[RMDB]
RNA sequence: GGGAACGACUCGAGUAGAGUCGAAAACUCUCUUUACUGUAGACCCAGGGCUAGACUACAUUUCCUAACCUCCACUGGGGUUAGGCUGCAUUGACUCAGUUCUGGCCAGUGGAAGUGAACAGAAGUGAUGUGCACCACUUCCAGGCAUGGUGCAUAAGAGUAGCCCUCAUUUCGAUGAGGGCUACUCAAAAGAAACAACAACAACAAC
Reactivity to 2A3 in 0.01 (KOAc 150mM, MgCl2 10mM, bicine 150mM(pH8.5), 24C), signal-to-noise 1, nucleotides 027 to 156: c000u030c000u020c000u010u060u020a050c000u030g040u050a080g110a270c000c000c000a000g100g020g040c000u080a020g020a030c040u070a020c110a040u080u070u060c000c000u000a020a020c000c000u010c020c050a220c300u300g020g010g010g010u020u000a020g000g000c000u050g060c010a270u180u160g000a200c030u040c030a020g040u190u060c000u000g020g010c010c000a000g000u060g000g030a030a030g010u010g030a070a030c090a110g030a090a000g020u140g120a040u170g090u050g000c000a020c000c000a000c000u160u120c090c020a060g000g130c040a000u080g020g020u000g030c000a000u020a010a050
Source: RMDB library OK3TST, as collected in RNAgym. Chemical mapping of a 207-nucleotide RNA with 2A3. The reactions ran in a buffer of 150 mM KOAc, 10 mM MgCl2 and 150 mM bicine (pH 8.5), at 24 C.